[RMDB]
RNA sequence: GGGAACGACUCGAGUAGAGUCGAAAAUCGUGUUUGCUGGCAUGGUAGAUGCACCCAGACACAUCAAGGACGGGCAUUACACGGUCGCCAGCUUAGCUGCGGCGUUCAGUCACCAUGCUCUACGUUACACCAAAAUAGUCUUCGGACUAUUUUGGUGAAAAGAAACAACAACAACAAC
Reactivity to 2A3 in 0.01 (KOAc 150mM, MgCl2 10mM, bicine 150mM(pH8.5), 24C), signal-to-noise 4, nucleotides 027 to 126: u090c020g000u030g050u020u080u100g100c100u080g050g000c000a020u010g030g030u060a070g020a070u040g020c050a120c020c000c010a020g040a020c080a010c020a140u170c100a090a070g050g000a020c030g020g000g020c010a010u020u100a040c030a020c080g060g020u030c000g050c100c040a030g010c020u020u060a030g010c050u020g020c010g010g000c000g020u040u090c040a040g020u020c010a010c020c010a020u040g000c010u020c030u050a060c040g060u080u090a050
Reactivity to DMS in 0.01 (KOAc 150mM, MgCl2 10mM, bicine 150mM(pH8.5), 24C), signal-to-noise 5, nucleotides 027 to 126: u000c090g010u010g000u010u010u000g020c080u000g010g020c010a040u000g010g000u000a130g020a060u010g030c140a120c020c040c020a080g000a230c150a060c110a070u000c180a120a110g000g000a150c110g000g000g000c030a040u010u000a070c090a050c020g000g000u000c050g030c040c030a070g010c030u000u000a070g010c130u010g020c030g010g010c020g000u000u010c120a090g000u000c100a070c070c030a020u000g020c010u000c150u000a080c090g000u000u010a230